[RMDB]
RNA sequence: GGGAACGACUCGAGUAGAGUCGAAAAUGAAGUCCUUGCCCACGCCUAUGUCCUGAAUGGUAAUGCCUAGGUUUUCUUCUAGGGUUUUUAUGGUUUUAGGUCUAACGUUUAAGUCUUUAAUCCAUCUUGAAUUAAUUUUUGUAUAAGGUGUAAGGAAAUCGUAUUUAGGUUUCGACCUAAAUACGAUAAAAGAAACAACAACAACAAC
Reactivity to 2A3 in 0.01 (KOAc 150mM, MgCl2 10mM, bicine 150mM(pH8.5), 24C), signal-to-noise 2, nucleotides 027 to 156: u150g020a040a000g110u050c010c010u040u070g000c030c010c000a020c020g000c020c010u090a130u140g030u050c010c000u060g050a080a050u120g080g020u080a070a020u090g050c000c000u010a000g090g000u020u090u280u160c030u140u000c020u030a040g020g010g040u020u050u030u010u210a030u050g000g000u000u030u020u150a020g000g000u000c010u020a080a020c030g050u070u090u070a080a050g000u000c020u000u070u070a050a020u040c040c030a010u020c010u040u060g080a050a030u040u110a090a080u140u270u100u130u070g040u030a150u020a090a070g060g000u040g040u010a030a040g060g000a090a120
Reactivity to DMS in 0.01 (KOAc 150mM, MgCl2 10mM, bicine 150mM(pH8.5), 24C), signal-to-noise 1, nucleotides 027 to 156: u010g000a110a080g000u000c000c020u000u010g010c000c010c020a070c090g010c030c030u000a100u010g000u000c010c010u010g030a060a070u010g030g010u000a050a070u020g020c020c020u000a060g020g020u020u000u030u010c180u010u000c040u010a100g020g020g010u010u010u000u000u000a030u010g010g010u000u000u000u000a030g010g020u000c040u000a090a070c100g030u000u010u010a110a120g000u000c050u000u000u000a040a060u010c050c010a080u000c100u000u000g010a030a040u010u000a040a080u000u000u000u000u000g010u000a110u010a060a080g010g020u000g050u010a070a040g010g010a050a080
Chemical mapping of a 207-nucleotide RNA with 2A3 and DMS. The DMS profile rests on 3,116 reads. The reactions ran in a buffer of 150 mM KOAc, 10 mM MgCl2 and 150 mM bicine (pH 8.5), at 24 C. The 2A3 profile rests on 979 reads. Reactivities are given for positions 27 through 156.